[RMDB]
RNA sequence: GGGAACGACUCGAGUAGAGUCGAAAACGUACGUUUCUCCCGUCAAGCAGCCCCUGUUGCUGCCUGACCCUAUUAAGGGAGAUGGGGUGAAGUCAGCCUUAUCACCCAAGUGACUCGUGGGGGUGGACAUAGGAUCGCCUUUCGAGGCGAUCCUAUGAAAAGAAACAACAACAACAAC
Reactivity to DMS in 0.01 (KOAc 150mM, MgCl2 10mM, bicine 150mM(pH8.5), 24C), signal-to-noise 2, nucleotides 027 to 126: c060g050u070a120c130g000u010u000u000c040u010c000c000c010g000u000c010a010a040g000c000a010g020c000c030c060c160u030g000u090u080g030c020u000g070c050c010u000g000a080c000c180c060u040a160u000u040a140a090g000g010g040a110g000a070u040g000g010g050g010u000g000a180a140g030u010c080a090g000c020c010u010u020a060u010c050a040c000c030c000a080a100g020u000g000a070c060u000c040g010u000g000g010g000g000g010u000g010g030a200
Reactivity to 2A3 in 0.01 (KOAc 150mM, MgCl2 10mM, bicine 150mM(pH8.5), 24C), signal-to-noise 3, nucleotides 027 to 126: c020g100u120a020c100g040u020u040u010c000u020c000c010c020g000u000c030a040a000g000c000a000g030c000c020c000c110u030g170u300u090g030c010u000g000c010c000u040g030a030c000c000c060u110a120u190u150a080a160g000g000g020a060g010a060u080g000g000g000g000u030g010a100a020g160u090c050a040g000c000c020u030u020a030u120c000a010c010c010c000a000a020g080u070g050a060c010u020c050g030u100g040g050g020g000g000u030g000g000a040

Source: RMDB library RFM100, as collected in RNAgym. An RNA of 177 nucleotides, treated with DMS and 2A3 and read out base by base. Values cover nucleotides 27 to 126. The DMS profile rests on 2,314 reads. Conditions: 150 mM KOAc, 10 mM MgCl2 and 150 mM bicine (pH 8.5), 24 C.